[RMDB]
The record gives the reactivity of an RNA of 177 nucleotides to DMS and 2A3.
Values cover nucleotides 27 to 126.
RNA sequence: GGGAACGACUCGAGUAGAGUCGAAAAUUAGGUGUGUUCUUUGAUACAAUGUUGGUUUGUACAGCAACUGCAAUCAUGAUUUUACUAUAUUCAGGAUUGAAAUUUGGUGAUAACGCACCUCAAGGUGCAACCUCUCCAGUUUCGACUGGAGAGGUUGAAAAGAAACAACAACAACAAC
Reactivity to DMS in 0.01 (KOAc 150mM, MgCl2 10mM, bicine 150mM(pH8.5), 24C), signal-to-noise 6, nucleotides 027 to 126: u010u000a040g020g010u000g030u000g000u000u010c110u000u010u010g010a190u000a050c030a030a040u010g010u010u010g010g010u000u000u010g000u000a060c070a100g000c030a030a030c190u000g010c020a020a020u000c010a040u000g000a030u000u000u010u020a140c240u010a090u010a030u000u000c000a020g000g010a020u000u010g000a050a050a080u000u010u000g010g000u000g000a080u000a030a020c020g010c000a010c000c000u000c240a050a070g010g020u010g000
Reactivity to 2A3 in 0.01 (KOAc 150mM, MgCl2 10mM, bicine 150mM(pH8.5), 24C), signal-to-noise 3, nucleotides 027 to 126: u120u040a050g000g000u000g000u010g020u050u020c020u060u120u110g080a070u050a060c030a050a030u090g060u140u120g170g150u090u020u120g110u090a050c040a040g020c020a040a010c010u030g040c020a000a040u010c010a020u020g030a040u020u050u080u190a160c100u110a060u040a040u300u050c010a000g020g010a070u000u030g050a090a140a090u090u040u030g050g010u050g040a020u040a060a010c000g000c010a000c000c010u000c040a080a100g070g070u090g100

Notes:
It was measured as part of the RMDB library OK2TRN. Reactivities are rounded to 0.1 and cut off at 0 and 3. The 2A3 profile rests on 2,726 reads. For 2A3 the reverse transcriptase was SuperScript II with manganese. The RNA was probed in 150 mM KOAc, 10 mM MgCl2 and 150 mM bicine (pH 8.5) at 24 C.